The record gives the reactivity of an RNA of 177 nucleotides to DMS and 2A3. The RNA was probed in 150 mM KOAc, 10 mM MgCl2 and 150 mM bicine (pH 8.5) at 24 C. It was measured as part of the RMDB library OK2TST. Values are in units of 0.01, from 0 to 300, in steps of 10.
RNA sequence: GGGAACGACUCGAGUAGAGUCGAAAACAAUAGCUUAACAACCAAAAAGAGUCCAGGACCAGAUGGAUUCACAGCCGAAUUCUACCAGAGGUACAAGGAGGAACUGGUACCAUUCCUUCUGAAACUAGUGGAUCACAUUAUUCGUAAUGUGAUCCACAAAAGAAACAACAACAACAAC
Reactivity to DMS in 0.01 (KOAc 150mM, MgCl2 10mM, bicine 150mM(pH8.5), 24C), signal-to-noise 2, nucleotides 027 to 126: c060a090a140u000a040g060c040u010u000a080a170c190a040a100c050c050a050a040a220a050a150g010a060g040u010c010c030a010g040g000a050c010c030a040g000a040u000g010g000a030u010u010c010a090c180a110g010c020c010g030a040a080u000u000c040u010a050c130c030a080g010a090g030g020u010a050c090a140a060g050g010a000g000g000a040a030c040u000g010g000u000a010c190c100a270u010u000c010c000u000u000c010u000g000a120a040a080c150u000a120
Reactivity to 2A3 in 0.01 (KOAc 150mM, MgCl2 10mM, bicine 150mM(pH8.5), 24C), signal-to-noise 1, nucleotides 027 to 126: c020a000a110u050a120g050c020u150u050a110a020c080a070a080c030c020a040a060a070a040a070g050a020g000u020c010c000a010g070g010a050c000c030a040g020a080u000g000g000a000u050u050c060a030c020a070g070c070c010g070a070a130u090u070c020u070a100c020c000a080g020a030g000g000u080a040c060a080a040g020g010a000g020g000a000a050c040u040g050g060u020a100c040c020a080u040u010c000c000u010u050c020u040g050a060a120a030c010u030a020